[RMDB]
RNA sequence: GGGAACGACUCGAGUAGAGUCGAAAAGGUUGGGGCUGGGGCGCGGACAGGCGGCUGACGGUCAAAUGCCCCCGGGGGCGCGCAGAUGUGGCGGGCGUGGCCACCGGCUGCCGUGUAGUGGGGCGGCCUAGAUAUCGUUGUUCGCAACGAUAUCUAGAAAAGAAACAACAACAACAAC
Reactivity to 2A3 in 0.01 (KOAc 150mM, MgCl2 10mM, bicine 150mM(pH8.5), 24C), signal-to-noise 4, nucleotides 027 to 126: g080g010u100u110g020g000g020g040c090u080g010g000g000g000c050g000c020g030g020a040c050a040g040g000c010g000g000c020u040g050a040c040g020g000u030c010a020a040a140u160g020c000c000c000c000c000g050g000g000g030g000c020g000c020g000c020a040g050a200u170g060u100g100g020c050g020g010g000c040g020u050g030g020c000c000a030c020c000g020g000c010u010g000c000c000g020u030g010u060a070g010u100g010g020g010g010c030g000g000c000
Reactivity to DMS in 0.01 (KOAc 150mM, MgCl2 10mM, bicine 150mM(pH8.5), 24C), signal-to-noise 4, nucleotides 027 to 126: g010g000u030u020g000g000g000g010c050u030g020g000g020g020c130g000c080g000g000a070c070a080g000g000c090g000g000c030u010g010a110c100g010g000u010c070a050a060a100u030g000c000c000c010c010c040g000g000g000g030g020c050g010c060g000c050a090g010a110u050g010u020g000g020c110g000g000g000c060g010u010g010g000c020c040a100c060c000g010g000c020u010g010c010c020g020u010g010u020a070g010u010g010g000g000g010c020g010g010c060

Structure probing data (2A3 and DMS) for a 177-nucleotide construct. The reactions ran in a buffer of 150 mM KOAc, 10 mM MgCl2 and 150 mM bicine (pH 8.5), at 24 C. It was measured as part of the RMDB library OK1LIB. For 2A3 the reverse transcriptase was SuperScript II with manganese. For DMS, 12,597 sequencing reads were counted. The 2A3 profile rests on 5,762 reads. Values cover nucleotides 27 to 126.